[RMDB]
RNA sequence: GGGAACGACUCGAGUAGAGUCGAAAAACUAUUUUUGCUCCUCUUCUCAUUUAUCUGUUUCAUGUACCAUUCUACUGUGGUAAAAUGAGAAUAUUAGUGCGUCUUUCUAAGCCUUCACUGAACUUUUCUUUCUCCACCACCUAGCUUUGCUCAACUAAUACCCGAAACAUUUCGAUGUUUCGGGUAUAAAAGAAACAACAACAACAAC
Reactivity to 2A3 in 0.01 (KOAc 150mM, MgCl2 10mM, bicine 150mM(pH8.5), 24C), signal-to-noise 1, nucleotides 027 to 156: a000c070u040a140u040u030u020u080u070g040c040u050c010c000u060c000u010u000c010u020c040a020u020u050u060a160u070c130u070g200u080u100u060c080a050u130g010u040a040c020c000a020u100u050c100u100a100c070u120g000u070g000g000u030a010a060a060a110u020g000a010g010a010a040u040a020u100u120a030g000u020g000c000g010u000c020u010u070u030c020u050a040a070g040c000c010u000u020c020a090c120u030g090a170a050c020u100u090u130u040c050u030u140u060c050u000c010c020a010c020c000a000c030c000u000a020g010c000u040u050u040g050c060u080c020a000a000c040u200a050

This 207-nucleotide RNA was probed chemically with 2A3. For 2A3, 550 sequencing reads were counted. The data come from the RNA Mapping Database (RMDB), library OK3TST.